[RMDB]
RNA sequence: GGGAACGACUCGAGUAGAGUCGAAAAUUUUCAACAAGACACUCUUGUACAGUGUAAACGGUACACGAGUAACAAAAAUGUCAGAAACAACAACAGCUGUUGCUGACGCUGUGUAUAAAGACAUAAAGUGAGACUAACGAUUCGUCGUUAGUCUCACAAAAGAAACAACAACAACAAC
Reactivity to DMS in 0.01 (KOAc 150mM, MgCl2 10mM, bicine 150mM(pH8.5), 24C), signal-to-noise 1, nucleotides 027 to 126: u000u000u010u000c030a110a060c180a190a140g000a150c180a050c000u000c000u000u000g020u000a000c000a060g010u010g030u000a090a110a000c000g030g040u000a010c020a000c040g000a000g010u010a060a060c160a010a050a010a070a020u000g000u000c000a000g000a170a100a050c030a090a060c050a170a160c100a080g000c000u000g040u010u020g020c090u000g000a030c210g060c120u040g000u000g000u000a110u000a020a070a100g000a010c060a020u000a100a050a080
Reactivity to 2A3 in 0.01 (KOAc 150mM, MgCl2 10mM, bicine 150mM(pH8.5), 24C), signal-to-noise 1, nucleotides 027 to 126: u050u010u040u060c010a000a030c000a030a030g070a020c060a000c080u000c000u000u020g000u000a000c020a060g010u020g070u140a200a300a020c040g070g000u000a010c000a000c010g010a010g000u050a000a020c020a020a000a110a000a020u040g000u010c000a000g070a040a140a030c040a010a010c010a070a060c020a070g080c020u120g060u300u170g100c030u040g020a010c020g000c030u000g010u000g010u020a020u020a150a150a030g040a000c020a000u100a040a110a010